An RNA of 177 nucleotides, treated with DMS and read out base by base.
For DMS, 664 sequencing reads were counted.
The data come from the RNA Mapping Database (RMDB), library OK2TST.
For DMS the reverse transcriptase was MarathonRT.
Conditions: 150 mM KOAc, 10 mM MgCl2 and 150 mM bicine (pH 8.5), 24 C.

RNA sequence: GGGAACGACUCGAGUAGAGUCGAAAACACCGCAUACGGACCGGUGCCGAUGGGAUGGCUGGCAAAGUUACUGAGGGUUUCCCAUUCGCGCGGCAGGAUCAUCGCCGGAACUUGCCCCAGCAGUAACAUCAGUCGUAACCUUCGGGUUACGACUGAUAAAAGAAACAACAACAACAAC
Reactivity to DMS in 0.01 (KOAc 150mM, MgCl2 10mM, bicine 150mM(pH8.5), 24C), signal-to-noise 1, nucleotides 027 to 126: c100a120c040c010g030c120a130u000a120c050g030g000a120c070c040g010g030u000g040c010c030g010a040u000g010g000g000a070u000g000g010c050u000g150g000c150a110a040a120g010u010u000a050c050u000g000a200g000g010g000u000u000u010c030c020c030a200u010u010c140g000c090g010c060g030g000c020a060g050g020a100u000c140a060u010c090g040c030c000g010g000a090a030c160u000u000g010c050c000c000c020a100g040c010a080g020u010a060a050c070